[RMDB]
RNA sequence: GGGAACGACUCGAGUAGAGUCGAAAAGAAAAUAGCGAUGAGUGCCUUAUGCUGGUUGUGGGAGUCUUGUGAAGAACAUACUUGGCAUGUCUCAGAACACACCUGAGCGUCUGUGCCUGGGACGGGCAGUAAGUCGGGAGUUCGCUCCCGACUUACUAAAAGAAACAACAACAACAAC
Reactivity to DMS in 0.01 (KOAc 150mM, MgCl2 10mM, bicine 150mM(pH8.5), 24C), signal-to-noise 1, nucleotides 027 to 126: g010a080a110a080a130u020a090g020c060g010a080u000g000a090g030u010g000c050c050u020u010a080u000g000c040u000g000g000u000u030g040u010g000g000g010a070g020u020c040u000u040g080u020g000a110a120g010a080a110c110a070u010a100c060u020u000g000g000c040a030u000g030u000c000u000c000a000g000a130a060c070a040c150a030c030c020u000g000a060g020c140g010u000c150u010g060u000g000c100c000u010g020g020g000a020c030g020g000g020c020
Structure probing data (DMS) for a 177-nucleotide construct.
The DMS profile rests on 1,068 reads.
The reactions ran in a buffer of 150 mM KOAc, 10 mM MgCl2 and 150 mM bicine (pH 8.5), at 24 C.
Source: RMDB library OK2TRN, as collected in RNAgym.
Values cover nucleotides 27 to 126.